An RNA of 177 nucleotides, treated with DMS and 2A3 and read out base by base. The reactions ran in a buffer of 150 mM KOAc, 10 mM MgCl2 and 150 mM bicine (pH 8.5), at 24 C.
[RMDB]
RNA sequence: GGGAACGACUCGAGUAGAGUCGAAAAACACCUGGCCUACAAGGUACCUGUAUAUGCUUUAGCUUUUUUGAACCUCAUGAUACUGACGUAGAUAUGGCAGAUAUUAUUUUCAUUUCAUAGGAAAAUAGUGAGUAUAAUCAUUCGUGAUUAUACUCACAAAAGAAACAACAACAACAAC
Reactivity to DMS in 0.01 (KOAc 150mM, MgCl2 10mM, bicine 150mM(pH8.5), 24C), signal-to-noise 6, nucleotides 027 to 126: a100c140a110c030c020u000g020g020c040c020u000a070c090a070a110g000g010u000a040c070c030u000g000u010a060u010a050u010g010c060u000u000u000a090g010c020u000u000u000u000u000u000g010a070a080c070c040u000c050a050u010g010a070u000a030c050u000g000a090c140g020u000a050g010a080u000a050u000g010g000c050a040g010a090u000a050u010u000a040u000u000u000u000c010a070u010u010u000c110a110u000a100g000g000a030a030a030a040u000a070
Reactivity to 2A3 in 0.01 (KOAc 150mM, MgCl2 10mM, bicine 150mM(pH8.5), 24C), signal-to-noise 7, nucleotides 027 to 126: a000c050a020c010c010u020g060g010c010c010u060a070c040a070a000g020g010u050a060c020c000u040g080u060a080u010a020u170g040c030u070u070u090a060g020c000u070u080u090u020u060u180g050a040a030c010c000u030c030a040u040g050a020u050a080c030u060g050a020c030g030u040a010g040a150u110a040u110g050g000c010a010g040a090u040a050u110u060a060u020u060u020u020c020a040u050u100u060c060a070u150a100g130g000a020a040a040a010u060a060
For 2A3 the reverse transcriptase was SuperScript II with manganese.
The 2A3 profile rests on 10,761 reads.